[RMDB]
RNA sequence: GGGAACGACUCGAGUAGAGUCGAAAAAUGAUUCCACAAGAUCUAGUUUCGUUCAAGUAACGGAUUCUAGCCAACUGAAAGGAUCUUCUGAUCAAUCCAGAGAUCAUUUGGAUUCCAUUAGUAAUGAUGAGAGUGACAUUUUCGAAUGUCACUCUCAAAAAGAAACAACAACAACAAC
Reactivity to DMS in 0.01 (KOAc 150mM, MgCl2 10mM, bicine 150mM(pH8.5), 24C), signal-to-noise 3, nucleotides 027 to 126: a010u020g010a020u030u010c000c050a130c150a140a070g000a090u030c000u000a000g000u000u000u000c000g020u010u000c070a090a180g020u040a000a010c000g020g010a010u020u040c000u000a000g010c180c080a130a080c050u010g000a100a030a140g000g000a070u010c000u010u030c190u020g040a050u000c160a070a040u050c140c050a090g010a150g010a080u020c020a020u000u020u000g040g010a100u010u000c070c030a050u050u020a110g000u020a080a060u000g030a130
Reactivity to 2A3 in 0.01 (KOAc 150mM, MgCl2 10mM, bicine 150mM(pH8.5), 24C), signal-to-noise 5, nucleotides 027 to 126: a000u130g000a020u050u020c010c000a030c020a100a030g010a080u010c000u010a010g010u010u000u000c020g020u010u010c210a300a090g000u100a200a040c010g050g020a050u210u020c000u020a000g010c050c020a040a010c080u060g040a030a080a040g030g000a000u000c000u070u010c010u090g030a040u100c040a100a050u070c050c030a030g020a000g000a220u030c030a050u040u000u020g050g010a020u120u040c020c000a020u040u040a030g180u160a130a200u120g050a060